[RMDB]
RNA sequence: GGGAACGACUCGAGUAGAGUCGAAAAAAGAGGUUGAAAGUACCGAAUCAUCAAACAAAGGAGCUGUCAUCAAAGAUAGGGAUGUAAAUGCAGGUACAGCUGGUACUCAUACAGUUCCAAGGCUCAACGAUUAAAUGACUUUCGAGUCAUUUAAUCGAAAAGAAACAACAACAACAAC
Reactivity to 2A3 in 0.01 (KOAc 150mM, MgCl2 10mM, bicine 150mM(pH8.5), 24C), signal-to-noise 3, nucleotides 027 to 126: a000a000g090a040g020g010u060u040g050a100a030a020g030u040a010c000c030g010a020a040u090c020a020u040c020a060a080a160c030a020a120a060g080g000a020g010c020u010g050u060c020a040u030c020a090a100a080g100a150u150a100g120g020g030a010u030g040u070a010a140a020u100g040c060a020g040g030u030a030c020a010g030c050u130g080g000u000a020c000u010c040a050u080a140c010a030g010u000u000c030c000a030a020g080g000c030u010c060a020a040
Reactivity to DMS in 0.01 (KOAc 150mM, MgCl2 10mM, bicine 150mM(pH8.5), 24C), signal-to-noise 6, nucleotides 027 to 126: a070a050g020a100g010g000u000u000g000a120a090a150g020u000a040c040c020g000a150a110u000c100a070u000c080a060a080a100c160a060a110a140g010g010a060g010c010u000g000u000c020a050u010c130a070a100a080g000a090u000a090g010g000g000a030u000g000u000a030a040a080u000g010c160a060g000g000u000a010c040a120g010c080u000g010g010u000a030c020u010c070a090u010a060c050a030g000u000u000c020c010a120a140g010g010c050u010c070a070a160